RNA sequence: GGGAACGACUCGAGUAGAGUCGAAAAGGGGUCGAUACGAGAGUAGUACAGGACAUGCGAUGUGUGGCUGAAGCCUCCACGGCCAUGCAUCGCAACAGCCUGUACGAUGGUAGUAUCGACGGAGGCACCCAAAGUAUAUAAGUUCGCUUAUAUACAAGUUCAUUACCGUGUUCGCACGGUAAUGAACAAAAGAAACAACAACAACAAC
Reactivity to 2A3 in 0.01 (KOAc 150mM, MgCl2 10mM, bicine 150mM(pH8.5), 24C), signal-to-noise 1, nucleotides 027 to 156: g300g030g060g000u000c010g010a010u010a000c000g000a020g010a000g080u010a000g010u000a010c020a020g000g080a100c160a280u240g010c000g000a000u010g010u000g000u000g010g000c010u000g000a070a030g000c010c000u000c000c000a000c000g010g000c020c000a000u010g000c000a000u000c000g000c000a000a010c030a000g010c000c010u000g000u000a010c020g000a000u000g010g000u020a000g000u000a000u000c000g000a000c030g000g000a000g000g000c000a070c000c000c010a030a020a030g000u000a000u000a000u010a030a000g010u030u090c240g100c130u000u000a000u000a000u000a000c020a040a040